[RMDB]
RNA sequence: GGGAACGACUCGAGUAGAGUCGAAAACUUCAUGCGGUGGCUUGGUCAGGACUGUACUUGUUUUCUCCAGCCCAUUGAGGGGAGGGUCGGUGAACAGGGUUAUGAUAACGAGGCAUUUGAGGGCUCGACGACGUGAAUAGUUCGCUAUUCACGUCGUAAAAGAAACAACAACAACAAC
Reactivity to 2A3 in 0.01 (KOAc 150mM, MgCl2 10mM, bicine 150mM(pH8.5), 24C), signal-to-noise 2, nucleotides 027 to 126: c010u070u050c030a050u110g020c050g060g010u040g060g000c050u050u120g080g010u040c020a010g010g050a070c030u040g030u110a070c030u160u100g070u120u140u050u000c060u000c030c020a030g010c010c020c000a030u050u120g040a070g000g040g030g000a090g000g020g000u070c040g040g000u030g040a030a010c020a040g070g000g020u060u070a140u120g100a080u030a090a020c060g010a030g050g000c010a010u050u040u150g080a060g050g030g000c020u050c070g020
Reactivity to DMS in 0.01 (KOAc 150mM, MgCl2 10mM, bicine 150mM(pH8.5), 24C), signal-to-noise 2, nucleotides 027 to 126: c060u000u010c080a050u000g010c090g000g010u000g030g010c060u000u000g030g030u000c060a100g020g010a080c050u010g000u000a060c070u000u000g000u000u000u000u000c040u000c030c050a110g010c020c000c010a100u010u020g010a130g010g010g000g010a090g000g000g010u000c060g000g020u010g000a070a050c080a070g010g000g010u010u000a060u010g010a090u030a040a110c100g010a060g020g010c050a100u000u000u000g020a150g000g000g010c040u000c060g010
Structure probing data (2A3 and DMS) for a 177-nucleotide construct.
2A3 adducts were read by reverse transcription with SuperScript II with manganese.
The RNA was probed in 150 mM KOAc, 10 mM MgCl2 and 150 mM bicine (pH 8.5) at 24 C.
The DMS profile rests on 2,503 reads.